The data come from the RNA Mapping Database (RMDB), library 15KLIB. An RNA of 170 nucleotides, treated with 2A3 and DMS and read out base by base. The reactions ran in a buffer of 150 mM KOAc, 10 mM MgCl2 and 150 mM bicine (pH 8.5), at 24 C. 2A3 adducts were read by reverse transcription with SuperScript II with manganese. In probing experiments dimethyl sulfate is read out at A N1 and C N3, which are open when not base-paired.

[RMDB]
RNA sequence: GGGAACGACUCGAGUAGAGUCGAAAAGGUUACAUUGCUGGAAUACAGAAUUUUAAGGAAACGCUGUAUUAUCAGAACAAUGUCUUUAUGUCUGAAGCUAAAUGCUGGGUGGAAACCGAUCUGAAGAACAGGGAAGACUUCGGUCUUCCCAAAAGAAACAACAACAACAAC
Reactivity to 2A3 in 0.01 (KOAc 150mM, MgCl2 10mM, bicine 150mM(pH8.5), 24C), signal-to-noise 4, nucleotides 027 to 129: g020g000u080u070a030c000a000u000u000g010c020u010g000g000a000a000u000a000c000a010g040a060a120u070u010u060u120a210a160g230g000a030a030a000c050g000c030u000g020u000a010u010u030a110u100c010a020g000a080a070c000a000a010u000g040u000c000u030u090u050a120u140g020u000c010u000g050a010a010g000c020u060a120a050a000u100g030c030u070g030g020g000u030g020g000a040a010a010c050c000g010a090u070c040u090g060a060a050g030a100a000c040a070
Reactivity to DMS in 0.01 (KOAc 150mM, MgCl2 10mM, bicine 150mM(pH8.5), 24C), signal-to-noise 3, nucleotides 027 to 129: g050g000u000u000a000c020a020u050u050g020c030u010g070g010a000a000u030a000c000a110g020a020a000u020u010u000u000a090a290g050g020a000a000a000c300g010c010u000g020u000a040u000u050a100u000c020a030g040a030a090c100a040a030u050g020u010c040u020u010u050a070u020g010u030c020u010g020a000a000g000c040u010a040a090a060u060g010c000u010g000g000g020u060g040g050a090a030a090c070c070g020a070u010c100u050g050a100a050g040a100a120c000a210